This 177-nucleotide RNA was probed chemically with 2A3 and DMS. For 2A3, 2,555 sequencing reads were counted. High DMS reactivity at an A or C suggests that its Watson-Crick edge is free. The data come from the RNA Mapping Database (RMDB), library OK2TST. The reactions ran in a buffer of 150 mM KOAc, 10 mM MgCl2 and 150 mM bicine (pH 8.5), at 24 C. For DMS the reverse transcriptase was MarathonRT.
RNA sequence: GGGAACGACUCGAGUAGAGUCGAAAAGGUGCCGUUGCCGAUAAAAGGUCGGCCCGACAACGCGGCGGCGGGUGCAUUGAUGGCGCCUAGCAAGCCCUGCUCGAGGGUCUGCAACGGCGACGCGUUGCCCCAUCGAACGGUUCGCCGUUCGAUGGGGAAAAGAAACAACAACAACAAC
Reactivity to 2A3 in 0.01 (KOAc 150mM, MgCl2 10mM, bicine 150mM(pH8.5), 24C), signal-to-noise 2, nucleotides 027 to 126: g060g020u070g010c000c000g060u070u080g030c000c010g060a080u180a180a230a010a000g050g010u050c000g000g030c000c020c000g010a020c010a060a030c010g000c060g020g010c010g030g000c000g020g040g000u030g000c050a070u070u300g130a160u300g220g000c010g000c010c000u030a030g010c020a000a080g000c010c020c020u030g010c070u040c050g130a060g000g000g030u030c000u050g030c020a030a030c030g020g030c000g020a010c010g020c020g020u010u110g090
Reactivity to DMS in 0.01 (KOAc 150mM, MgCl2 10mM, bicine 150mM(pH8.5), 24C), signal-to-noise 2, nucleotides 027 to 126: g040g020u000g020c030c000g000u000u010g000c000c010g000a130u040a060a060a120a200g020g000u000c130g000g020c010c010c020g000a280c240a040a050c060g000c190g020g000c000g010g030c000g000g000g030u010g000c000a050u000u010g010a140u000g020g030c000g010c000c010u020a170g000c020a050a120g000c010c000c000u000g010c090u000c130g000a170g010g000g020u000c030u020g000c040a170a300c100g020g000c010g010a010c010g020c050g000u000u000g000